[RMDB]
RNA sequence: GGGAACGACUCGAGUAGAGUCGAAAACUGGUUGAAGUGGCUUCUCCUGGGCGAUAGCUCGCUGUUUUUGUGGCUGGCUUUCAGCGGGCUGGAGGAGCCGGGAGCGGAGGCGGAGGACCGAGCCAAAGAUGCUAUGUUCACUUCGGUGAACAUAGAACAUACCAGUGAACUUCGGUUCACUGGUAUGAAAAGAAACAACAACAACAAC
Reactivity to 2A3 in 0.01 (KOAc 150mM, MgCl2 10mM, bicine 150mM(pH8.5), 24C), signal-to-noise 1, nucleotides 027 to 156: c030u030g080g080u060u130g090a100a040g040u050g090g020c000u010u020c000u030c010c020u070g040g080g050c070g090a100u120a010g000c000u020c020g000c010u010g090u040u030u000u140u060g090u080g010g040c050u040g030g000c000u030u050u000c000a000g000c000g000g000g010c000u000g000g000a000g000g020a020g000c000c010g010g000g010a040g000c030g000g030a020g000g070c070g020g040a040g010g010a020c050c060g020a020g000c000c010a010a110a000g120a000u080g050c000u000a000u000g020u000u000c000a000c000u060u060c240g120g020u010g000a000a000c000a010u010a000g000a010a010